An RNA of 177 nucleotides, treated with 2A3 and read out base by base. For 2A3 the reverse transcriptase was SuperScript II with manganese. Conditions: 150 mM KOAc, 10 mM MgCl2 and 150 mM bicine (pH 8.5), 24 C. It was measured as part of the RMDB library OK1LIB.
RNA sequence: GGGAACGACUCGAGUAGAGUCGAAAAAGUGGCGGGGAAGCUCAUCUAAUCUAAGUCCGGCCUUUUAGUCCAGCUGGUUGAGCAUUUGACGAGGCAAUUCGGUUUUUUAUUGCAGCCGUCAAUUGUCGGCACUAGGGCUAUUCGUAGCCCUAGUGCCAAAAGAAACAACAACAACAAC
Reactivity to 2A3 in 0.01 (KOAc 150mM, MgCl2 10mM, bicine 150mM(pH8.5), 24C), signal-to-noise 2, nucleotides 027 to 126: a000g150u150g050g030c090g040g080g080g000a040a030g020c000u040c030a050u010c020u130a110a080u120c090u130a030a050g090u100c000c000g060g000c040c070u020u110u080u020a050g010u030c020c040a000g040c020u100g160g000u080u040g040a010g020c020a020u030u000u000g070a030c000g030a010g000g050c000a090a010u270u300c010g140g060u000u000u040u000u250u130a190u090u170g000c040a010g110c010c000g000u000c000a020a000u080u070g070u090c000